[RMDB]
RNA sequence: GGGAACGACUCGAGUAGAGUCGAAAAGCAGUGUCAUAACCGUGAAAUUCUAGCAGUGCACUACGGACGUGUUUGACCCGUGCCCUGGACAAUCCACUUCGUGGUGGUCAGCUCCGGCAACGCCAUCUGAACUGACACGGUUCGCCGUGUCAGUUCAAAAAGAAACAACAACAACAAC
Reactivity to DMS in 0.01 (KOAc 150mM, MgCl2 10mM, bicine 150mM(pH8.5), 24C), signal-to-noise 2, nucleotides 027 to 126: g000c030a040g000u000g000u000c030a050u000a120a140c080c090g000u000g010a030a110a090u020u000c040u000a170g010c060a050g040u000g000c050a040c070u000a050c060g000g010a070c100g000u000g010u000u000u000g020a110c010c000c020g020u000g010c040c010c010u020g000g010a090c060a150a120u010c080c020a030c120u000u010c200g000u000g010g060u020g000g000u010c130a090g020c030u000c100c040g000g000c020a070a040c140g030c050c030a040u010c090